Chemical mapping of a 177-nucleotide RNA with 2A3. The RNA was probed in 150 mM KOAc, 10 mM MgCl2 and 150 mM bicine (pH 8.5) at 24 C. 2A3 is a SHAPE reagent: it acylates the 2'-hydroxyl of flexible nucleotides of all four kinds. Source: RMDB library OK1LIB, as collected in RNAgym.
RNA sequence: GGGAACGACUCGAGUAGAGUCGAAAAGAAAAAUGCAAAGAUUCCUCCAUUAUAGCACACAAACAAUUCGCCAUGAUUGUUUCUGCAUUUGUGGCCUUGGUUUUCUAAUUUUUUCCGUAUUUAAAGAGCUACCAGUGCGUUUCGACGCACUGGUAGCAAAAGAAACAACAACAACAAC
Reactivity to 2A3 in 0.01 (KOAc 150mM, MgCl2 10mM, bicine 150mM(pH8.5), 24C), signal-to-noise 1, nucleotides 027 to 126: g040a000a040a000a000a070u180g140c100a000a110a000g000a000u160u030c000c000u000c010c000a000u030u150a180u180a050g000c000a000c010a000c000a060a000a000c080a120a030u160u130c020g110c000c070a030u220g020a070u000u000g000u010u030u030c070u060g010c020a080u000u000u200g000u020g000g070c020c000u050u050g040g000u040u010u010u010c100u060a090a090u070u020u000u000u020u010c010c000g030u060a170u090u200u080a180a150a000g090a000